Notes
An RNA of 207 nucleotides, treated with DMS and read out base by base. Conditions: 150 mM KOAc, 10 mM MgCl2 and 150 mM bicine (pH 8.5), 24 C. Reactivities are given for positions 27 through 156. For DMS, 2,446 sequencing reads were counted.
RNA sequence: GGGAACGACUCGAGUAGAGUCGAAAACCGUAGGAGCUCUUGUCAGUCCAAGAUGAGUGGACGACGAAGUGAGCUUCGAAAGAGGCUCACAGAGUCCAUUGAGGACUUGGAUUUAGAGCUCCUAAACGGAAAAGGUGUGUCGUUCGCGACACACCAACUUAUAGAAUUGCUUCGGCAAUUCUAUAAGAAAAGAAACAACAACAACAAC
Reactivity to DMS in 0.01 (KOAc 150mM, MgCl2 10mM, bicine 150mM(pH8.5), 24C), signal-to-noise 1, nucleotides 027 to 156: c030c000g020u000a040g000g000a030g000c000u000c000u020u020g010u000c070a060g020u000c010c020a020a300g030a240u000g000a150g030u020g000g010a030c000g020a280c130g010a230a230g000u000g030a000g000c000u000u000c030g020a090a140a260g000a020g000g010c010u010c000a060c000a050g000a300g020u000c000c010a070u000u010g020a300g010g020a050c000u000u050g020g000a030u020u000u010a050g000a030g020c000u010c010c000u000a010a020a070c000g000g010a120a070a110a090g000g030u000g030u000g000u000c000g000u000u000c260g020c020g010a010c000a030c000a020c040c020a020a060